RNA sequence: GGGAACGACUCGAGUAGAGUCGAAAAACCUGUUUGUAGUGUAAUGACGUUCAAAGUUCUUCAUAAUCAUCUUUGUCACUCCAUCUGCAUCACUAGGGUUGGAACAGGCAUCGCCCAUAGAACAGCGCUUUAGGCUUUGGUUCGCCAAAGCCUAAAGAAAAGAAACAACAACAACAAC
Reactivity to DMS in 0.01 (KOAc 150mM, MgCl2 10mM, bicine 150mM(pH8.5), 24C), signal-to-noise 1, nucleotides 027 to 126: a080c000c000u000g010u000u010u000g010u000a030g020u000g010u010a160a070u000g010a050c020g020u030u000c120a080a160a120g000u000u000c050u010u020c120a100u010a090a070u000c070a010u000c040u000u000u020g000u020c050a090c030u020c030c010a060u010c020u000g020c090a070u000c070a050c070u000a170g010g030g000u000u000g010g040a000a060c020a050g000g000c050a050u000c130g000c010c000c000a050u000a050g020a030a050c070a080g020c150g020
An RNA of 177 nucleotides, treated with DMS and read out base by base. Values are in units of 0.01, from 0 to 300, in steps of 10. The reactions ran in a buffer of 150 mM KOAc, 10 mM MgCl2 and 150 mM bicine (pH 8.5), at 24 C. It was measured as part of the RMDB library OK2TST.